[RMDB]
RNA sequence: GGGAACGACUCGAGUAGAGUCGAAAAACAACUCGACAUGGUCUGCUCUGGAAAUCUCCAGUGUUUACGUUGCGAAAACAAUUGAAAUCAUAACAAUAAAAUCAAAUUUGAAAUUUGUGAGAGGUAACAAAUCUCUCACGUUCGCGUGAGAGAUUUGAAAAGAAACAACAACAACAAC
Reactivity to DMS in 0.01 (KOAc 150mM, MgCl2 10mM, bicine 150mM(pH8.5), 24C), signal-to-noise 1, nucleotides 027 to 126: a150c190a150a080c110u040c070g000a000c000a150u050g050g070u000c040u000g010c050u000c040u030g000g000a080a000a020u040c100u000c000c040a110g020u010g000u000u010u010a020c190g000u000u000g000c000g050a090a030a090a090c130a130a020u000u050g000a040a090a140u000c140a050u000a010a010c000a000a120u000a070a140a070a080u000c070a060a000a150u000u110u010g030a080a060a080u000u000u000g000u000g000a080g010a120g040g020u040a020a000
Reactivity to 2A3 in 0.01 (KOAc 150mM, MgCl2 10mM, bicine 150mM(pH8.5), 24C), signal-to-noise 2, nucleotides 027 to 126: a030c120a000a270c100u000c000g190a050c030a160u080g040g150u180c000u010g080c000u010c000u030g010g000a050a110a220u090c110u000c000c000a000g000u000g020u030u000u030a030c030g000u140u000g010c140g090a050a120a120a050c050a050a060u020u140g070a170a140a000u170c020a000u140a170a150c060a130a050u200a240a200a000a000u180c010a010a080a070u220u060u150g150a080a080a080u110u230u000g030u000g000a000g000a040g010g010u040a020a000
Description
The record gives the reactivity of an RNA of 177 nucleotides to DMS and 2A3. Conditions: 150 mM KOAc, 10 mM MgCl2 and 150 mM bicine (pH 8.5), 24 C.